[RMDB]
RNA sequence: GGGAACGACUCGAGUAGAGUCGAAAAAUUUGUUGAUAAAUACUAUGCUUUUCUUAAUAAGCACUUUUCUAUGAUGAUACUGUCUGAUGACGGUGUCGUUUGCUAUAAUAGUGAUUAUGCAGCUAAGGACUAUAGUUAUCUUCGGAUAACUAUAGUCAAAAGAAACAACAACAACAAC
Reactivity to 2A3 in 0.01 (KOAc 150mM, MgCl2 10mM, bicine 150mM(pH8.5), 24C), signal-to-noise 4, nucleotides 027 to 126: a000u130u130u100g010u000u050g030a060u060a090a090a020u100a070c050u060a050u110g030c010u080u070u070u070c020u030u170a090a050u070a110a010g030c010a030c020u100u090u080u030c060u070a070u150g010a010u000g000a010u020a010c010u010g020u000c030u110g220a190u280g000a040c020g000g000u000g010u000c010g000u030u010u030g000c020u030a010u030a230a040u030a050g020u010g020a010u010u030a020u070g050c030a020g000c020u030a050a020g100
Reactivity to DMS in 0.01 (KOAc 150mM, MgCl2 10mM, bicine 150mM(pH8.5), 24C), signal-to-noise 5, nucleotides 027 to 126: a100u010u000u000g010u010u000g000a120u010a090a050a080u000a120c090u000a060u000g000c010u000u000u010u010c060u010u010a130a040u000a020a010g010c000a030c090u000u000u000u010c130u000a080u010g000a020u000g010a010u000a010c000u000g010u000c000u000g010a180u010g020a010c000g010g020u000g020u000c010g010u000u000u000g020c200u000a040u000a050a040u000a010g020u000g010a050u000u000a040u000g010c150a050g000c080u000a070a070g010
The record gives the reactivity of an RNA of 177 nucleotides to 2A3 and DMS. 2A3 adducts were read by reverse transcription with SuperScript II with manganese. The reactions ran in a buffer of 150 mM KOAc, 10 mM MgCl2 and 150 mM bicine (pH 8.5), at 24 C. DMS adducts were read by reverse transcription with MarathonRT. Values cover nucleotides 27 to 126.